[RMDB]
RNA sequence: GGGAACGACUCGAGUAGAGUCGAAAAGCCUUCUUCGGAAGGCGGUGAGAUAUGGAGUCGACGAGAGCGCUCACGAUGAUCUCUUAUCGGAAACGAUAAGAGUGAGUGAGCGAACUACUCUCGCGACUCCUAAGUCGUGUUCGCAUUUCGAUGCGAAAUAGUAUUGCCGGUUCGCCGGCAAUACUAUAAAAGAAACAACAACAACAAC
Reactivity to 2A3 in 0.01 (KOAc 150mM, MgCl2 10mM, bicine 150mM(pH8.5), 24C), signal-to-noise 1, nucleotides 027 to 156: g000c010c010u030u000c010u030u020c170g110g000a000a000g000g000c040g010g040u180g100a160g000a000u010a000u030g000g000a000g000u020c000g020a300c000g000a110g000a000g000c010g010c000u010c000a010c000g250a300u050g000a000u000c010u020c000u000u000a000u000c000g000g010a000a000a000c000g000a000u000a000a000g010a000g000u000g000a000g010u000g000a000g000c000g000a010a020c020u080a050c000u000c000u000c000g000c000g000a000c000u000c000c000u000a000a000g000u000c030g020u060g080u080u060c010g000c050a030u070u020u140c260g080a070u030g010c000g020a080a040

An RNA of 207 nucleotides, treated with 2A3 and read out base by base.
2A3 adducts were read by reverse transcription with SuperScript II with manganese.
It was measured as part of the RMDB library RNAMAK.
The RNA was probed in 150 mM KOAc, 10 mM MgCl2 and 150 mM bicine (pH 8.5) at 24 C.